Structure probing data (DMS and 2A3) for a 177-nucleotide construct.
The reactions ran in a buffer of 150 mM KOAc, 10 mM MgCl2 and 150 mM bicine (pH 8.5), at 24 C.
For DMS, 2,219 sequencing reads were counted.
It was measured as part of the RMDB library TTRDEL.
The 2A3 profile rests on 3,820 reads.
[RMDB]
RNA sequence: GGGAACGACUCGAGUAGAGUCGAAAAGAUAUGGACACCUCAUAAGGCGAAGAACUCGGAAACGAGGGAGCCUGUGAGGGUGUCCUAAGUCAAAAGUACACCCUUAGGUUCGCCUAAGGGUGUACAACCUACGAUGUAUCUUCGGAUACAUCGUAGGAAAAGAAACAACAACAACAAC
Reactivity to DMS in 0.01 (KOAc 150mM, MgCl2 10mM, bicine 150mM(pH8.5), 24C), signal-to-noise 3, nucleotides 027 to 126: g000a040u010a300u010g000g000a020c010a040c000c000u000c010a030u010a050a040g020g020c000g000a120a180g000a130a180c010u000c000g010g000a130a120a230c000g000a000g000g010g020a160g010c010c000u000g000u000g010a040g000g010g030u000g000u000c000c000u010a020a040g000u010c030a070a080a130a110g010u000a010c010a000c000c000c000u000u000a000g000g000u000u010c300g020c000c000u000a010a000g000g000g000u000g000u000a000c000a030a100
Reactivity to 2A3 in 0.01 (KOAc 150mM, MgCl2 10mM, bicine 150mM(pH8.5), 24C), signal-to-noise 2, nucleotides 027 to 126: g000a010u090a050u110g000g000a000c000a000c010c010u010c020a000u170a300a240g020g020c040g200a300a050g030a110a040c000u000c010g000g000a070a130a070c010g000a000g000g000g050a010g000c010c000u010g010u000g010a060g030g060g020u040g000u020c000c010u020a090a020g040u000c020a050a050a080a070g000u010a010c000a000c000c010c000u000u000a010g030g020u030u060c270g110c070c000u000a010a000g000g010g000u000g010u000a000c000a000a000